[RMDB]
An RNA of 207 nucleotides, treated with 2A3 and read out base by base. Source: RMDB library OK3TST, as collected in RNAgym. Conditions: 150 mM KOAc, 10 mM MgCl2 and 150 mM bicine (pH 8.5), 24 C.
RNA sequence: GGGAACGACUCGAGUAGAGUCGAAAACGGAGCGUCUGGAGAAAGUCUGGGUAGCCGGCUCGGACUCGGCGGUCGAACUCGCGGAGGUGAAUGCGGAGCUGGUGGACCUGACGUCGCUGAUCGGCUCCCCCGCGUAUCGGGUCGGGUCUCCGCAGCGCCUUAGCACGCUAUUCGUAGCGUGCUAAGGAAAAGAAACAACAACAACAAC
Reactivity to 2A3 in 0.01 (KOAc 150mM, MgCl2 10mM, bicine 150mM(pH8.5), 24C), signal-to-noise 1, nucleotides 027 to 156: c070g020g050a010g030c010g000u120c150u210g080g000a080g030a110a080a030g060u040c030u030g090g000g000u050a000g010c000c010g000g000c010u000c020g040g010a020c020u010c060g120g010c000g010g070u080c170g050a140a070c020u020c120g000c080g090g020a050g000g170u230g210a210a040u300g260c110g070g000a030g000c000u000g000g000u020g070g110a040c000c040u000g020a010c020g000u020c030g000c050u020g030a120u060c070g050g010c010u040c000c010c000c020c010g000c000g010u050a140u090c020g000g010g020u000c000g010g150g050u020c090u000c010c020g000c030a020g030c040g000